This 207-nucleotide RNA was probed chemically with DMS and 2A3. Values cover nucleotides 27 to 156. For DMS, 3,343 sequencing reads were counted. DMS adducts were read by reverse transcription with MarathonRT. Conditions: 150 mM KOAc, 10 mM MgCl2 and 150 mM bicine (pH 8.5), 24 C.

RNA sequence: GGGAACGACUCGAGUAGAGUCGAAAAUGAAGAAACACAAUCUCCGCUGCUUCUCAUGUGCUGUUGCGCAUUUCAUCGUGUGGGGCGAGAAAACCGGCGACAAAGCAAAACGCAAAGCUGAAAAAGAGGUUUACUGGUAUGGUUAUUAGCAAAAACACCUACCUAUUAGUUUCGACUAAUAGGUAGGAAAAGAAACAACAACAACAAC
Reactivity to DMS in 0.01 (KOAc 150mM, MgCl2 10mM, bicine 150mM(pH8.5), 24C), signal-to-noise 2, nucleotides 027 to 156: u000g000a120a140g000a130a040a080c030a110c060a100a170u000c040u010c040c040g000c070u010g010c020u000u000c010u010c070a090u000g020u000g060c050u010g040u000u000g000c040g020c060a080u000u010u010c000a100u020c050g010u010g030u010g020g010g000g000c140g000a130g010a080a040a060a080c080c030g010g010c010g060a110c080a040a050a100g040c030a040a030a060a090c050g020c020a070a050a110g010c000u010g000a070a080a020a070a080g010a070g000g000u000u000u000a080c030u010g020g000u000a070u010g030g020u010u000a080u000u000a110g040c040a010a040a060a060a050c070a110
Reactivity to 2A3 in 0.01 (KOAc 150mM, MgCl2 10mM, bicine 150mM(pH8.5), 24C), signal-to-noise 3, nucleotides 027 to 156: u140g020a030a110g090a070a120a000c040a020c030a110a090u030c030u000c040c010g030c030u040g020c020u060u030c020u020c050a030u090g040u040g020c040u060g030u130u130g020c040g000c040a080u030u060u040c050a080u040c020g010u010g010u050g050g020g000g030c030g030a030g050a030a030a010a050c020c020g060g000c010g010a060c080a010a090a020g040c000a000a100a070a050c030g020c030a000a050a090g000c020u070g100a090a050a000a010a020g030a040g020g000u030u040u030a060c040u040g040g010u060a040u050g000g050u040u030a060u080u080a030g050c030a000a030a130a000a000c040a020